[RMDB]
RNA sequence: GGGAACGACUCGAGUAGAGUCGAAAAGAAGAGAAGCGCGCGAAUUGGAAACCAGCGAACCUUAUUACGCGCGCAAGGAACCGGGCCUUGGUUCAUUGGAAAGAAUAGAUAAUAUCGCUGGUAAAGAAUCGUAAUACUGAUUCGUCAGUAUUACGAUAAAAGAAACAACAACAACAAC
Reactivity to DMS in 0.01 (KOAc 150mM, MgCl2 10mM, bicine 150mM(pH8.5), 24C), signal-to-noise 6, nucleotides 027 to 126: g000a170a140g000a150g000a180a160g020c000g010c000g020c000g000a100a050u020u020g000g010a150a140a080c000c000a010g010c010g010a020a130c080c050u020u020a040u010u000a120c020g000c000g020c010g010c000a020a030g000g000a030a030c010c020g010g000g010c070c040u010u010g000g010u000u000c020a100u030u000g010g000a110a090a100g010a080a080u030a090g000a110u030a070a040u020a140u000c010g000c000u000g010g000u010a040a060a090g000a130
Reactivity to 2A3 in 0.01 (KOAc 150mM, MgCl2 10mM, bicine 150mM(pH8.5), 24C), signal-to-noise 9, nucleotides 027 to 126: g080a040a010g110a000g020a140a030g020c010g000c000g000c000g010a020a040u050u030g030g030a080a100a130c000c000a000g000c000g010a060a130c000c010u060u080a050u050u120a100c000g000c000g000c000g000c000a000a010g090g000a010a000c010c000g050g160g030c020c030u110u150g030g000u010u030c020a030u090u180g080g080a120a100a040g060a090a060u150a120g150a070u140a150a030u090a090u070c010g000c000u000g000g010u020a010a030a000g060a020